[RMDB]
RNA sequence: GGGAACGACUCGAGUAGAGUCGAAAAUGAAACGAAGGGGGGACGGAGAAGGCUAUGUUGGCCGGGCGACGGUUGUCCCGGUUUAAGCGUGUAGGCUGGUUUUCCAGGCAAAUCCGGAGAAUAAAAAUGUAGCAUAUACGUUCGCGUAUAUGCUACAAAAAGAAACAACAACAACAAC
Reactivity to DMS in 0.01 (KOAc 150mM, MgCl2 10mM, bicine 150mM(pH8.5), 24C), signal-to-noise 2, nucleotides 027 to 126: u000g020a100a090a030c090g020a070a070g000g010g020g010g000g000a070c070g010g000a070g020a120a120g020g000c050u020a040u010g020u010u010g020g020c010c040g000g000g000c300g020a090c160g020g000u000u010g000u000c000c000c000g020g000u000u000u000a040a050g000c040g030u000g010u010a110g000g010c030u010g010g000u000u000u000u000c000c010a100g000g000c060a050a070a100u010c030c030g000g000a110g010a070a040u000a050a040a030a050a120

Chemical mapping of a 177-nucleotide RNA with DMS. The RNA was probed in 150 mM KOAc, 10 mM MgCl2 and 150 mM bicine (pH 8.5) at 24 C. For DMS, 1,786 sequencing reads were counted. DMS adducts were read by reverse transcription with MarathonRT. It was measured as part of the RMDB library M2PK90. Reactivities are rounded to 0.1 and cut off at 0 and 3.